[RMDB]
Record summary: Source: RMDB library OK2TRN, as collected in RNAgym. Chemical mapping of a 177-nucleotide RNA with DMS. The reactions ran in a buffer of 150 mM KOAc, 10 mM MgCl2 and 150 mM bicine (pH 8.5), at 24 C.
RNA sequence: GGGAACGACUCGAGUAGAGUCGAAAAUUUUCAUAUGUGAAUUGUCCGUAAAUUACUCAGAGGUGGGACACAGACAGACGGCCUUCCUUAAUUUCCGCUGGACCUGCACAUUUCUGGCCAAAAUGCACAGUAAAUCACCUUUCGAGGUGAUUUACUGAAAAGAAACAACAACAACAAC
Reactivity to DMS in 0.01 (KOAc 150mM, MgCl2 10mM, bicine 150mM(pH8.5), 24C), signal-to-noise 1, nucleotides 027 to 126: u020u000u000u000c050a080u000a090u030g050u010g010a050a060u000u000g030u000c090c030g020u000a040a060a070u000u000a090c100u010c110a070g010a110g010g000u000g010g010g000a120c120a030c050a040g000a060c100a060g010a130c190g030g020c090c050u000u000c020c030u010u000a050a060u000u010u000c030c030g010c040u010g010g030a050c070c050u000g000c140a090c010a070u000u000u000c050u000g000g000c000c080a050a010a040a090u000g040c260a220